[RMDB]
RNA sequence: GGGAACGACUCGAGUAGAGUCGAAAAGCUCACCAUGGAACACUCCCAUACUCCCUGUCCCCAAAGCUGAUGGGAAGACGUACCGAAUGGUUCAAGACUUCCGAGCUGUCAAUGAUGUCACCACAGGUGCCCGUCACGAAUUCGUUCGUGACGGGCAAAAAGAAACAACAACAACAAC
Reactivity to DMS in 0.01 (KOAc 150mM, MgCl2 10mM, bicine 150mM(pH8.5), 24C), signal-to-noise 1, nucleotides 027 to 126: g030c030u020c010a020c000c070a090u010g000g000a090a040c020a060c070u010c050c030c030a060u010a090c020u000c040c010c000u010g000u000c010c010c000c140a060a120a120g000c120u030g020a080u000g000g000g030a020a030g000a070c050g030u000a050c060c010g010a090a100u010g010g030u000u010c090a070a090g000a140c060u000u030c030c020g020a110g010c030u000g000u010c110a080a080u000g000a050u000g010u000c020a100c010c030a030c060a110g020g020